Description
Structure probing data (2A3 and DMS) for a 177-nucleotide construct. For 2A3, 1,058 sequencing reads were counted. For DMS, 842 sequencing reads were counted. The RNA was probed in 150 mM KOAc, 10 mM MgCl2 and 150 mM bicine (pH 8.5) at 24 C.
[RMDB]
RNA sequence: GGGAACGACUCGAGUAGAGUCGAAAACUCAAGGCCUUCGGGCCUUGAGAAAAGGCAUCGUAUCUUUGCUUCGAAGCCAAACAUGAAACAUGAAACCAGAGAAAAGUUUUGGGUUCGCCCAAAACAACUUGUUAUAUCCCUUCGGGGAUAUAACAAGAAAAGAAACAACAACAACAAC
Reactivity to 2A3 in 0.01 (KOAc 150mM, MgCl2 10mM, bicine 150mM(pH8.5), 24C), signal-to-noise 1, nucleotides 027 to 126: c000u000c000a000a020g000g000c000c030u110u170c280g070g080g000c000c000u030u000g000a010g000a000a050a000a010g010g000c020a020u030c020g000u090a030u050c080u090u220u260g090c020u090u100c020g020a050a020g000c000c000a030a120a000c050a050u110g120a220a070a000c050a020u110g080a100a050a060c040c030a050g050a020g050a140a070a020a080g010u000u000u000u000g070g000g020u020u050c120g060c020c010c000a040a000a000a000c010a000a020
Reactivity to DMS in 0.01 (KOAc 150mM, MgCl2 10mM, bicine 150mM(pH8.5), 24C), signal-to-noise 1, nucleotides 027 to 126: c000u010c010a000a000g010g010c000c010u000u000c190g000g010g040c010c000u000u010g000a000g000a000a060a080a100g000g000c010a080u010c010g000u000a070u000c090u000u020u010g010c160u040u000c040g050a010a130g020c000c010a100a080a140c080a040u000g010a080a120a080c100a030u000g000a090a190a150c040c040a170g010a110g010a100a020a070a150g000u000u000u000u000g010g000g000u000u000c190g010c010c000c010a000a000a010a010c020a080a060
Source: RMDB library M2PK50, as collected in RNAgym.
2A3 adducts were read by reverse transcription with SuperScript II with manganese.